Description:
The record gives the reactivity of an RNA of 207 nucleotides to DMS and 2A3.

RNA sequence: GGGAACGACUCGAGUAGAGUCGAAAAGAAAGAAAGAAAGCGCUUGGGUGGGUCCAUCGACCGUCGUGGCGUAUUCGGACGCUUUACCACGACGCGAGGAAAUAGCGAGACCGACCACCCCCUUUAACAGAGGUAUAGUAGUUCGCUACUAUACCAAGUGAUUGUAAAAGUUCGCUUUUACAAUCACAAAAGAAACAACAACAACAAC
Reactivity to DMS in 0.01 (KOAc 150mM, MgCl2 10mM, bicine 150mM(pH8.5), 24C), signal-to-noise 1, nucleotides 027 to 156: g010a170a060a120g010a190a040a130g000a070a110a140g020c060g020c140u010u020g000g000g040u000g010g000g060u000c020c000a130u000c130g000a050c180c010g030u000c020g010u000g000g000c000g010u000a060u010u000c050g000g000a140c050g000c080u000u030u000a050c000c020a050c040g000a000c000g030c010g010a140g020g000a040a070a060u020a030g000c020g000a100g000a160c040c020g010a050c010c010a010c000c000c000c050c030u000u000u000a040a110c130a120g000a240g030g050u000a020u000a010g000u000a020g040u000u000c300g030c020u000a030c010u020a000u020a020c010c000a010a040
Reactivity to 2A3 in 0.01 (KOAc 150mM, MgCl2 10mM, bicine 150mM(pH8.5), 24C), signal-to-noise 3, nucleotides 027 to 156: g050a020a070a000g070a050a160a000g060a030a080a000g090c130g000c240u180u120g050g050g000u060g000g070g000u010c040c020a100u160c040g020a080c030c020g000u030c000g000u000g010g000c050g020u070a090u040u170c060g020g020a020c020g000c020u110u080u190a030c020c010a000c000g020a000c000g000c010g010a010g030g010a030a090a060u030a030g060c050g020a020g040a080c010c000g010a010c000c000a010c010c040c000c000c000u040u080u030a160a040c120a040g070a030g180g010u000a000u000a000g000u000a000g000u010u050c140g050c100u000a000c000u000a000u010a010c000c000a000a000
2A3 adducts were read by reverse transcription with SuperScript II with manganese. The RNA was probed in 150 mM KOAc, 10 mM MgCl2 and 150 mM bicine (pH 8.5) at 24 C. DMS adducts were read by reverse transcription with MarathonRT.